[RMDB]
The record gives the reactivity of an RNA of 170 nucleotides to 2A3 and DMS. Reactivities are given for positions 27 through 129. The RNA was probed in 150 mM KOAc, 10 mM MgCl2 and 150 mM bicine (pH 8.5) at 24 C. High DMS reactivity at an A or C suggests that its Watson-Crick edge is free. It was measured as part of the RMDB library 15KLIB. For DMS, 57,940 sequencing reads were counted. The 2A3 profile rests on 81,123 reads.

RNA sequence: GGGAACGACUCGAGUAGAGUCGAAAAGCAAAGAAAGCAACGGGGCUAGCCGUCAGGUGUUCCUCCCCCCGAGAGGGGAAGAGUGAGGCUUAUCCCGGGGAACUCGGCGAAUCGUCCCCGCAUGGCACCAGAACUUACUUCGGUAAGUUCAAAAGAAACAACAACAACAAC
Reactivity to 2A3 in 0.01 (KOAc 150mM, MgCl2 10mM, bicine 150mM(pH8.5), 24C), signal-to-noise 9, nucleotides 027 to 129: g040c080a110a080a090g130a080a130a010g040c020a020a040c010g000g000g020g010c030u050a010g020c010c010g090u060c050a070g030g120u090g060u110u040c000c010u020c010c010c000c000c000c020g130a080g070a140g090g010g000g010a030a020g040a010g060u180g030a030g030g000c010u040u060a070u070c000c000c000g000g000g000g000a030a010c000u000c020g020g000c000g020a020a040u040c020g080u070c010c000c000c000g010c030a090u090g040g000c010a010c040c030a020
Reactivity to DMS in 0.01 (KOAc 150mM, MgCl2 10mM, bicine 150mM(pH8.5), 24C), signal-to-noise 9, nucleotides 027 to 129: g000c080a040a060a080g000a020a090a050g020c070a100a070c010g000g000g000g050c040u040a050g020c020c000g020u040c050a080g000g040u060g020u020u010c010c030u020c000c020c010c000c000c010g000a110g020a130g030g000g000g000a030a040g020a100g000u040g000a090g000g000c030u030u030a080u040c020c000c010g010g000g010g010a050a050c020u020c000g030g000c040g030a040a030u060c090g020u030c020c010c000c030g050c080a040u010g010g010c010a080c060c060a120